[RMDB]
RNA sequence: GGGAACGACUCGAGUAGAGUCGAAAAUAUCAGGGUAUUAAAAGACCACGAUCCUAAGAUGAUGAUUGGUGUACCGUUAAUGAUAGACACUAAUGAUACUUACGGUUUAAUGACUACUACAAAGUUUAACAUGGAUAAACAGAUGGGUAGAGAUAUGAUACAAGGUCACGUUCGCGUGACCUUGUAUAAAAGAAACAACAACAACAAC
Reactivity to DMS in 0.01 (KOAc 150mM, MgCl2 10mM, bicine 150mM(pH8.5), 24C), signal-to-noise 1, nucleotides 027 to 156: u010a090u010c010a120g010g050g060u010a050u000u000a090a180a210a220g020a050c050c000a060c060g000a150u000c000c050u010a040a060g000a200u040g050a010u000g010a050u030u000g000g050u000g000u010a150c020c050g010u000u020a040a080u040g000a200u000a170g070a300c000a020c000u010a010a000u010g010a140u000a010c000u000u000a130c110g000g000u000u000u000a090a040u000g020a270c040u000a060c060u000a020c050a020a040a060g010u000u000u010a040a080c050a060u000g040g040a120u000a010a000a010c040a270g010a120u000g000g000g000u020a130g000a220g000a190u000a080u000g030
Reactivity to 2A3 in 0.01 (KOAc 150mM, MgCl2 10mM, bicine 150mM(pH8.5), 24C), signal-to-noise 1, nucleotides 027 to 156: u250a170u060c120a150g000g000g150u210a150u090u190a200a200a050a000g080a000c020c000a050c000g030a090u020c000c000u080a050a090g020a060u100g000a020u020g020a000u140u100g020g000u000g020u150a280c040c100g030u080u140a170a000u170g050a130u130a050g070a020c000a000c000u030a050a070u120g040a040u000a120c030u050u060a020c050g050g110u020u050u020a060a090u110g020a030c040u050a000c000u000a030c020a100a140a070g010u010u030u040a010a010c070a070u000g060g050a080u040a070a070a000c000a000g090a070u180g020g100g100u000a000g000a000g010a000u020a100u230g140